Structure probing data (2A3 and DMS) for a 177-nucleotide construct. The DMS profile rests on 4,793 reads. DMS adducts were read by reverse transcription with MarathonRT. Conditions: 150 mM KOAc, 10 mM MgCl2 and 150 mM bicine (pH 8.5), 24 C. Values cover nucleotides 27 to 126.
RNA sequence: GGGAACGACUCGAGUAGAGUCGAAAAACAUUAAGUUUCGACUUAAUGUAAACCCGAUGAAGCGGCACAUACGGAGCUUCAUACAUCUAAGAGUGGAAAUAAAAAGUUGAUCCUUCGGGAUCAACAAUGACUAGAUUAUCUUCGGAUAAUCUAGUCAAAAAGAAACAACAACAACAAC
Reactivity to 2A3 in 0.01 (KOAc 150mM, MgCl2 10mM, bicine 150mM(pH8.5), 24C), signal-to-noise 4, nucleotides 027 to 126: a010c020a020u010u010a020a000g010u020u020u200c140g050a000c010u000u010a000a000u010g000u000a040a010a040c010c000c000g000a040u060g000a010a010g030c050g180g030c130a050c020a210u300a120c210g130g030a030g000c000u020u000c000a000u050a020c000a030u030c070u190a240a020g080a050g130u140g060g120a050a120a050u180a030a150a050a040a030g010u000u000g010a000u000c020c000u020u060c230g070g000g020a010u000c000a000a000c000a000a000
Reactivity to DMS in 0.01 (KOAc 150mM, MgCl2 10mM, bicine 150mM(pH8.5), 24C), signal-to-noise 5, nucleotides 027 to 126: a030c000a000u000u000a000a000g000u000u010u010c180g020a030c000u000u000a010a000u000g000u000a020a100a130c010c000c010g000a050u000g000a020a010g020c010g010g020c140a100c150a130u010a120c230g010g010a210g000c010u000u000c010a020u000a090c110a040u000c080u010a090a080g010a080g020u000g010g000a070a080a060u000a080a050a070a120a090g000u000u000g000a010u000c000c000u000u000c190g030g020g000a010u000c000a000a000c000a040a030